An RNA of 177 nucleotides, treated with DMS and 2A3 and read out base by base. Reactivities are given for positions 27 through 126. DMS adducts were read by reverse transcription with MarathonRT. Conditions: 150 mM KOAc, 10 mM MgCl2 and 150 mM bicine (pH 8.5), 24 C.
RNA sequence: GGGAACGACUCGAGUAGAGUCGAAAAUAUACAUUAGAUGUCGGCACAACUCCCGACUCGCGGUGAGCGAUACAGCGUAGGGCGAGCUUCGCAGCUGCUGUGCGGACGCCUAGCAAAAGCUAGGCAACCACUAUCAGGUCUUCGGACCUGAUAGUGGAAAAGAAACAACAACAACAAC
Reactivity to DMS in 0.01 (KOAc 150mM, MgCl2 10mM, bicine 150mM(pH8.5), 24C), signal-to-noise 2, nucleotides 027 to 126: u050a040u020a130c160a140u050u010a060g000a120u000g000u000c040g010g000c100a060c000a060a110c110u040c030c030c000g000a060c120u000c060g040c000g010g010u020g000a170g000c020g000a020u010a110c100a080g000c050g000u030a110g000g000g000c000g020a100g030c080u030u000c100g010c030a300g000c020u010g050c020u000g030u000g010c080g000g010a040c110g030c000c020u020a000g030c030a120a080a090a110g020c020u000a020g010g000c030a010a010
Reactivity to 2A3 in 0.01 (KOAc 150mM, MgCl2 10mM, bicine 150mM(pH8.5), 24C), signal-to-noise 5, nucleotides 027 to 126: u220a010u060a010c110a130u110u190a060g060a170u160g000u000c010g110g040c040a010c020a100a300c050u030c010c020c000g030a050c000u000c040g000c010g020g070u150g040a050g000c000g040a030u030a140c050a030g040c010g090u200a080g030g130g000c030g020a040g020c030u110u070c020g000c040a020g010c020u050g030c010u010g000u020g060c020g020g000a000c030g000c010c000u030a010g010c030a060a150a300a070g010c000u000a000g000g000c000a000a010